[RMDB]
RNA sequence: GGGAACGACUCGAGUAGAGUCGAAAAAGCGGGGGUGUCAGCCCAGCACUUGCUGCGUGGGAGGUGAAUUCCGGACGGACGUGUAUGGUCAGGUGUAGCAUUAUUAGUUCUUUGAGUCGGUACAUUUCAGGGCGCAUGUUCCAGAGGGUAGCAAGGGGUACAUAGUUAGAUUCGUCUGAUUGUGUACAAAAGAAACAACAACAACAAC
Reactivity to 2A3 in 0.01 (KOAc 150mM, MgCl2 10mM, bicine 150mM(pH8.5), 24C), signal-to-noise 4, nucleotides 027 to 156: a000g030c040g000g020g000g000g010u020g020u010c010a020g020c000c000c000a000g030c020a010c020u060u160g020c020u010g000c020g070u050g010g020g000a040g000g010u040g030a050a060u090u030c020c000g000g020a010c020g010g010a010c020g010u010g020u020a070u050g010g030u020c010a020g000g030u010g020u040a010g000c010a000u010u020a030u040u050a050g050u050u020c020u050u040u090g030a020g010u020c010g000g020u060a040c030a100u030u050u110c050a060g020g030g000c010g000c030a020u050g020u060u040c010c000a010g020a010g030g010g000u010a010g010c010a020a020g000g000g010
Reactivity to DMS in 0.01 (KOAc 150mM, MgCl2 10mM, bicine 150mM(pH8.5), 24C), signal-to-noise 4, nucleotides 027 to 156: a040g010c020g010g010g020g010g010u000g020u000c090a120g020c010c010c020a130g010c030a060c040u010u000g020c030u010g020c040g030u010g020g010g010a120g020g030u010g000a050a170u000u000c030c040g010g010a100c050g000g000a060c050g010u000g010u000a060u000g020g020u010c040a070g010g020u000g020u000a090g000c040a050u000u000a080u000u000a100g010u000u000c030u000u000u000g010a060g020u000c040g040g020u000a040c060a110u000u000u000c060a110g010g010g030c030g000c060a070u000g010u000u000c030c020a120g010a120g010g020g010u000a060g000c050a050a080g020g010g010